Chemical mapping of a 207-nucleotide RNA with 2A3 and DMS. For 2A3, 5,693 sequencing reads were counted. Conditions: 150 mM KOAc, 10 mM MgCl2 and 150 mM bicine (pH 8.5), 24 C. Values are in units of 0.01, from 0 to 300, in steps of 10. For 2A3 the reverse transcriptase was SuperScript II with manganese.

RNA sequence: GGGAACGACUCGAGUAGAGUCGAAAAGGGAACGCCGUACAUGUGCUACAAGGAUUCGGUCAACGAGAAGAGCAACCAGAAGAACAUCGGCGUCAUCAAAUCGAGCAACUUAUGUGUAGCACCCGAGACGAUGAUUCUCACCAAAAAUGGAUACCAAUACUCUACUAGAGUUCGCUCUAGUAGAGUAAAAAGAAACAACAACAACAAC
Reactivity to 2A3 in 0.01 (KOAc 150mM, MgCl2 10mM, bicine 150mM(pH8.5), 24C), signal-to-noise 7, nucleotides 027 to 156: g020g000g000a030a020c010g000c000c000g010u030a030c020a120u100g010u000g000c010u010a000c010a030a060g080g030a170u060u100c040g030g010u040c070a090a050c080g020a010g020a170a020g030a010g030c020a030a070c030c030a060g070a150a030g050a080a070c030a140u110c040g050g010c010g070u020c000a040u050c000a010a110a020u040c000g020a000g040c020a020a090c020u140u100a090u170g090u040g010u020a000g000c010a010c000c020c040g140a160g000a050c020g010a010u030g040a060u040u000c010u010c020a060c020c030a020a070a050a020a110u170g040g020a050u060a120c000c010a010a040
Reactivity to DMS in 0.01 (KOAc 150mM, MgCl2 10mM, bicine 150mM(pH8.5), 24C), signal-to-noise 4, nucleotides 027 to 156: g010g020g020a100a100c030g000c020c010g020u000a090c090a110u010g020u000g040c010u000a050c040a100a160g010g000a190u000u000c050g010g000u000c040a100a160c090g000a130g010a100a080g000a140g020c050a060a140c030c020a150g000a080a130g020a090a120c060a090u000c040g020g010c040g030u020c040a040u000c030a050a070a150u010c030g000a070g030c070a060a070c040u000u010a080u030g040u010g050u010a040g010c030a030c010c080c050g010a140g020a090c090g020a040u000g000a140u000u000c030u000c010a130c000c020a040a030a070a110a100u000g010g000a220u010a100c000c010a030a300